[RMDB]
The data come from the RNA Mapping Database (RMDB), library OK3TST. Chemical mapping of a 207-nucleotide RNA with DMS and 2A3. For 2A3, 1,511 sequencing reads were counted.

RNA sequence: GGGAACGACUCGAGUAGAGUCGAAAAAAUAUAUACCUCUUUAGUCAGUACCAUGCCUGAAGAGUAAUUACACAGAUGCUCCAUGAAUGUGGUUCUGAAAGGUCAUAUGGCAAGUGUCAGCCUUUUUAUGACAACACUGUACUCUCUUGUAAGUGCAGAGGUCGAUAAAUUUCGAUUUAUCGACCUCAAAAGAAACAACAACAACAAC
Reactivity to DMS in 0.01 (KOAc 150mM, MgCl2 10mM, bicine 150mM(pH8.5), 24C), signal-to-noise 1, nucleotides 027 to 156: a080a060u000a080u000a140u000a050c050c000u010c040u000u000u000a050g020u000c020a070g000u010a200c130c050a090u010g010c070c050u000g010a070a010g000a040g010u000a030a060u000u000a100c100a110c130a110g010a070u000g020c010u000c020c020a090u020g020a130a090u010g030u010g020g040u000u000c120u000g000a050a070a050g000g030u000c060a050u000a050u000g010g030c020a040a070g000u010g030u000c020a130g020c030c040u000u000u000u000u000a040u000g020a080c000a020a040c020a010c020u000g000u010a040c000u010c070u000c070u010u000g000u000a080a090g000u000g030c050a220
Reactivity to 2A3 in 0.01 (KOAc 150mM, MgCl2 10mM, bicine 150mM(pH8.5), 24C), signal-to-noise 3, nucleotides 027 to 156: a000a000u180a000u030a000u040a040c010c000u070c050u050u060u040a040g040u020c020a000g030u020a070c020c020a070u030g050c010c000u030g040a060a020g010a010g020u040a050a090u110u120a030c060a010c010a100g120a130u040g010c010u000c010c020a020u030g070a090a030u120g060u010g030g000u060u080c020u050g030a070a020a030g060g000u030c060a070u080a040u140g020g000c070a120a060g050u030g010u210c020a020g030c000c000u020u130u030u040u070a060u050g010a010c000a060a000c040a050c020u030g030u040a030c000u020c010u050c030u150u140g090u240a020a100g020u040g050c060a040